[RMDB]
RNA sequence: GGGAACGACUCGAGUAGAGUCGAAAAAAGGUCGUCACGGGCACGCUCAAAACGUUCUUCGUGUAAUCGGUGCCAUCAUUUGCUGGCCACCUUCUGGGGCUGGCGCGCCCAGCAACUGCCCGACGGCAUAAAUAGCGUCCUUCGGGACGCUAUUUAUAAAAGAAACAACAACAACAAC
Reactivity to 2A3 in 0.01 (KOAc 150mM, MgCl2 10mM, bicine 150mM(pH8.5), 24C), signal-to-noise 4, nucleotides 027 to 126: a000a010g100g000u030c010g000u030c030a010c180g000g000g000c040a030c070g050c030u040c050a060a180a070a060c030g060u120u070c050u230u190c060g030u040g030u140a150a120u120c070g020g000u040g010c040c020a040u060c030a030u090u140u300g060c010u000g020g040c040c020a170c080c000u200u070c110u240g030g000g030g000c010u030g080g000c040g010c020g030c010c000c000a000g000c000a010a070c040u050g000c000c030c000g020a030c030g010g000c000
Reactivity to DMS in 0.01 (KOAc 150mM, MgCl2 10mM, bicine 150mM(pH8.5), 24C), signal-to-noise 3, nucleotides 027 to 126: a100a040g020g020u010c060g000u000c010a090c170g020g010g000c010a040c100g040c080u020c170a110a050a130a120c030g000u030u020c060u030u010c010g000u020g000u030a060a080u010c150g000g000u020g000c010c050a120u040c090a120u020u010u030g020c060u010g000g000c030c030a060c020c000u010u000c090u060g000g000g000g000c060u000g010g000c070g020c090g010c070c030c030a110g000c050a070a090c120u020g010c020c010c020g020a020c060g010g000c050